[RMDB]
RNA sequence: GGGAACGACUCGAGUAGAGUCGAAAACAAAACUGACCAGCUAUGAGGUCAUACAUCGUCAUAGCAAAACAAAACAAAACUGACCAGAUAUGAGGUCAUACAUCGUCAUAUCAAACAAAACAACAAAGAGUACGGUAAUGUUCGCAUUACCGUACUCAAAAGAAACAACAACAACAAC
Reactivity to DMS in 0.01 (KOAc 150mM, MgCl2 10mM, bicine 150mM(pH8.5), 24C), signal-to-noise 1, nucleotides 027 to 126: c080a030a000a170a060c230u080g000a080c000c000a300g000c000u000a000u000g000a000g000g000u000c000a210u300a000c130a130u000c060g000u000c000a000u000a000g060c060a300a150a000a130c300a270a020a300a120c210a060a140a190a300c230u000g000a000c000c000a110g130a000u000a000u000g000a000g140g000u000c000a000u000a170c120a020u000c130g000u000c000a050u000a000u100c000a000a220a040c230a000a210a000a020c000a060a040c300a100a120a040
Reactivity to 2A3 in 0.01 (KOAc 150mM, MgCl2 10mM, bicine 150mM(pH8.5), 24C), signal-to-noise 4, nucleotides 027 to 126: c010a000a090a000a100c140u070g000a000c020c000a000g000c000u000a020u010g000a010g030g000u030c020a050u210a010c160a140u220c150g030u000c000a000u000a000g030c000a010a010a000a030c020a000a020a010a000c060a000a120a020a050c130u050g000a000c010c000a000g000a010u000a000u020g000a010g030g000u040c020a000u180a030c070a080u090c120g060u000c000a000u010a000u040c000a030a050a000c090a000a050a020a000c090a010a030c050a040a070a000